The data come from the RNA Mapping Database (RMDB), library OK1LIB. The record gives the reactivity of an RNA of 177 nucleotides to 2A3 and DMS. Reactivities are given for positions 27 through 126. DMS adducts were read by reverse transcription with MarathonRT. The RNA was probed in 150 mM KOAc, 10 mM MgCl2 and 150 mM bicine (pH 8.5) at 24 C.
[RMDB]
RNA sequence: GGGAACGACUCGAGUAGAGUCGAAAAGACGCAACGUUGUUCUAUUUCGUUGCUCAAUCAAUGACGCGAAUGGUAUGAGUAACACUACAGAAGAAAUGUAGUUUCCGAGUUUUUGCGUCGAAAGAAAGGGAAUUCAUAUGUUCGCAUAUGAAUUCCCAAAAGAAACAACAACAACAAC
Reactivity to 2A3 in 0.01 (KOAc 150mM, MgCl2 10mM, bicine 150mM(pH8.5), 24C), signal-to-noise 5, nucleotides 027 to 126: g020a000c030g030c010a020a030c040g060u030u050g110u130u110c130u130a250u060u110u040c010g020u000u040g000c000u010c030a010a030u080c020a020a190u110g020a020c020g010c010g070a010a050u050g130g030u190a110u140g020a050g030u050a060a010c020a010c040u020a000c000a040g130a180a010g080a080a300a050u040g000u030a000g020u010u090u040c030c030g060a100g070u050u070u030u060u060g000c000g010u010c000g020a060a030a000g120a060a080a020
Reactivity to DMS in 0.01 (KOAc 150mM, MgCl2 10mM, bicine 150mM(pH8.5), 24C), signal-to-noise 3, nucleotides 027 to 126: g010a050c140g020c010a070a060c160g000u000u000g020u000u020c100u030a060u070u010u000c030g020u000u000g000c030u020c010a000a100u020c040a070a030u030g000a050c040g040c030g000a000a050u000g000g030u010a120u000g000a060g080u020a010a000c080a160c060u000a050c050a010g010a160a090g020a070a040a100u000g010u000a020g010u000u000u010c030c000g010a080g000u020u010u000u010u010g010c000g020u000c000g030a030a020a090g000a090a140a140